[RMDB]
RNA sequence: GGGAACGACUCGAGUAGAGUCGAAAAGGUCUUCAGCAGAGACGUGGCAUCUCUCUCCUCUGCCGCUACACUGGGCCUGGGCGUCAGCACCGCUUUGGGUGCCAGGGUGUCAUCCCCCUCUGCAGGCCCAGAAGCCUGCAUUCGUGCAGGCUUCUGGAAAAGAAACAACAACAACAAC
Reactivity to DMS in 0.01 (KOAc 150mM, MgCl2 10mM, bicine 150mM(pH8.5), 24C), signal-to-noise 1, nucleotides 027 to 126: g010g030u010c020u000u000c140a110g000c090a080g000a050g000a100c140g030u010g000g000c030a050u000c020u000c060u010c040u010c030c030u000c040u000g010c070c030g030c040u000a060c150a130c080u010g000g000g010c010c020u010g020g000g010c060g000u000c050a110g000c050a020c130c020g010c220u010u010u020g020g000g030u000g020c010c050a040g000g000g000u010g010u010c050a160u010c010c020c050c060c010u000c020u000g030c030a050g000g000c030
The record gives the reactivity of an RNA of 177 nucleotides to DMS. The reactions ran in a buffer of 150 mM KOAc, 10 mM MgCl2 and 150 mM bicine (pH 8.5), at 24 C. For DMS, 1,597 sequencing reads were counted. It was measured as part of the RMDB library OK2TST.